An RNA of 177 nucleotides, treated with DMS and read out base by base. It was measured as part of the RMDB library TTRINS. For DMS the reverse transcriptase was MarathonRT. The RNA was probed in 150 mM KOAc, 10 mM MgCl2 and 150 mM bicine (pH 8.5) at 24 C.
[RMDB]
RNA sequence: GGGAACGACUCGAGUAGAGUCGAAAAGAUAUGGAUUCAGUCCUCUGGCACAGUUCGCGAUAAGCGUGUGUCGGAAACGACAUAAACGCUUUUGACGCGAACUGUGCCAGAGGUUGAAUCCUAAGUCCAGACAAUAAAGCUUCGGCUUUAUUGUCUGAAAAGAAACAACAACAACAAC
Reactivity to DMS in 0.01 (KOAc 150mM, MgCl2 10mM, bicine 150mM(pH8.5), 24C), signal-to-noise 2, nucleotides 027 to 126: g000a150u000a300u010g010g000a020u000u000c000a020g000u000c010c000u000c000u000g020g000c010a000c000a010g000u000u000c010g050c000g030a160u000a050a010g010c000g080u000g020u000g000u010c000g010g000a140a110a220c000g030a000c000a030u000a060a170a100c000g030c000u000u000u000u000g000a240c070g000c020g010a000a000c000u000g000u000g020c010c030a010g010a000g020g020u010u000g000a020a000u000c000c000u000a020a080g000u020c040